[RMDB]
RNA sequence: GGGAACGACUCGAGUAGAGUCGAAAAUAACUUUUAUUUGACUUGGAACAACCGAGAAAGUGUUCAAAAAUUGUCCGAAUAUUGAAAAUUACCGGUGAAAAUUGCCGCCACUUUUUCGGCAAUUUUACAGUGGUAGUGAGUUCGCUCACUACCACUGAAAAGAAACAACAACAACAAC
Reactivity to 2A3 in 0.01 (KOAc 150mM, MgCl2 10mM, bicine 150mM(pH8.5), 24C), signal-to-noise 4, nucleotides 027 to 126: u080a020a050c020u020u030u140u230a270u210u060u130g050a060c020u040u040g010g040a110a040c040a080a070c050c010g040a010g040a050a050a030g050u050g010u040u050c020a050a040a050a040a100u070u080g110u080c030c010g020a060a010u080a040u060u100g120a120a080a050a090u150u050a100c100c010g000g020u120g080a210a100a070a160u150u110g030c000c000g040c030c000a080c030u050u070u000u010u040c000g000g010c000a000a000u010u010u000u020a060
Reactivity to DMS in 0.01 (KOAc 150mM, MgCl2 10mM, bicine 150mM(pH8.5), 24C), signal-to-noise 2, nucleotides 027 to 126: u010a080a110c110u060u020u000u020a070u020u020u000g000a140c130u000u000g010g040a080a070c170a160a070c060c000g000a020g010a030a030a090g000u000g000u030u020c040a090a030a030a070a050u020u010g020u020c020c000g020a050a020u060a150u020u000g000a100a060a160a030u000u000a020c300c030g000g000u000g040a000a040a080a060u010u030g000c150c020g010c300c140a080c020u000u000u000u020u010c000g020g000c060a020a010u010u000u000u000a060

This 177-nucleotide RNA was probed chemically with 2A3 and DMS. High 2A3 reactivity points to a flexible backbone, as in loops and unpaired stretches. For 2A3 the reverse transcriptase was SuperScript II with manganese.